This 207-nucleotide RNA was probed chemically with 2A3. The 2A3 profile rests on 878 reads. 2A3 adducts were read by reverse transcription with SuperScript II with manganese. Reactivities are given for positions 27 through 156.

RNA sequence: GGGAACGACUCGAGUAGAGUCGAAAAGAUAAGAUUAUUAAGUGUUUACAAAACAUUGUAGUUACUGUAUUUAUGGAUAAGGAGAAAUAACAAUGAAAACAAUAAAAAGAAAAAUAGUACAAGAAGGUAUGAACAAAGAAGAAACUAUGAUGGAAGAGAACAGAGAUAGGUUCGCCUAUCUCUGUUCAAAAGAAACAACAACAACAAC
Reactivity to 2A3 in 0.01 (KOAc 150mM, MgCl2 10mM, bicine 150mM(pH8.5), 24C), signal-to-noise 1, nucleotides 027 to 156: g010a030u150a060a060g000a020u160u110a050u040u160a260a060g100u120g000u130u060u100a130c120a000a120a040a000c000a000u090u030g020u020a090g030u020u030a010c020u120g060u130a030u080u130u020a050u180g030g010a010u000a080a070g000g030a070g000a100a050a020u100a050a100c030a110a000u140g010a060a090a000a000c000a000a000u180a160a060a030a000a000g090a010a030a000a020a000u080a080g010u010a070c020a040a040g050a010a000g100g000u050a010u130g030a020a010c030a050a050a000g030a030a020g000a000a010a000c050u020a100u100g020a000u010g030g010a030a020g020a030